An RNA of 177 nucleotides, treated with 2A3 and DMS and read out base by base. It was measured as part of the RMDB library M2PK50. The reactions ran in a buffer of 150 mM KOAc, 10 mM MgCl2 and 150 mM bicine (pH 8.5), at 24 C. 2A3 adducts were read by reverse transcription with SuperScript II with manganese. For 2A3, 4,129 sequencing reads were counted. As a SHAPE reagent, 2A3 marks flexible, mostly unpaired nucleotides at the ribose 2'-OH.
RNA sequence: GGGAACGACUCGAGUAGAGUCGAAAAGUUUCAUCCUUCGGGAUGAAACAAAUAAAGUGACGCUCGCGCGUCACUGGCAUCGAGUAGGUCGACCCGCCUACAAAAUCGACGGGUUCGCCCGUCGAAACCUUAGUGUAGUCUUCGGACUACACUAAGGAAAAGAAACAACAACAACAAC
Reactivity to 2A3 in 0.01 (KOAc 150mM, MgCl2 10mM, bicine 150mM(pH8.5), 24C), signal-to-noise 2, nucleotides 027 to 126: g000u000u010u000c000a000u000c010c000u010u050c250g120g000g000a000u010g000a000a020a010c000a000a050a000u120a010a110a000g000u010g000a000c010g040c020u110c110g190c060g000c000g030u000c000a000c000u010g020g040c030a110u170c120g040a050g040u010a000g020g040u040c060g060a120c010c000c000g000c010c000u030a020c020a000a060a010a140u030c000g000a000c010g000g050g000u050u050c230g090c040c020c000g010u000c000g000a000a000a000
Reactivity to DMS in 0.01 (KOAc 150mM, MgCl2 10mM, bicine 150mM(pH8.5), 24C), signal-to-noise 4, nucleotides 027 to 126: g010u000u010u010c000a000u000c000c000u000u020c190g010g010g010a010u010g000a010a000a010c000a080a080a050u000a050a120a030g010u000g010a010c000g020c010u000c300g010c300g010c000g010u000c000a000c000u000g010g020c220a100u020c130g000a160g000u000a010g000g010u000c060g000a240c000c010c020g000c010c000u000a030c010a070a050a060a070u010c010g010a000c000g000g010g010u010u020c260g020c020c010c000g000u010c000g010a000a060a090